[RMDB]
RNA sequence: GGGAACGACUCGAGUAGAGUCGAAAAAGGUUGAACAUGAUCCGCAAUGCGAUAGCUCCGCCGAUCACUUCGGCCACAUCGGUUGCCAUCGCGACGAUCUCGGCCUGUGCCCAGUAGGCCAGCCGGGUCGGGGGAAGACUUUCGAGUCUUCCCCCGAAAAAGAAACAACAACAACAAC
Reactivity to DMS in 0.01 (KOAc 150mM, MgCl2 10mM, bicine 150mM(pH8.5), 24C), signal-to-noise 1, nucleotides 027 to 126: a020g030g040u040u000g000a060a080c130a040u000g000a040u000c060c200g040c080a090a090u020g040c000g010a010u000a050g010c030u000c210c160g020c060c010g000a000u000c200a110c230u000u000c020g040g000c180c060a080c250a090u000c050g010g020u010u000g020c000c050a040u000c040g020c040g000a150c090g010a060u000c000u000c040g010g030c040c090u000g010u020g000c000c020c030a290g010u010a130g030g000c000c000a090g000c070c010g020g020g000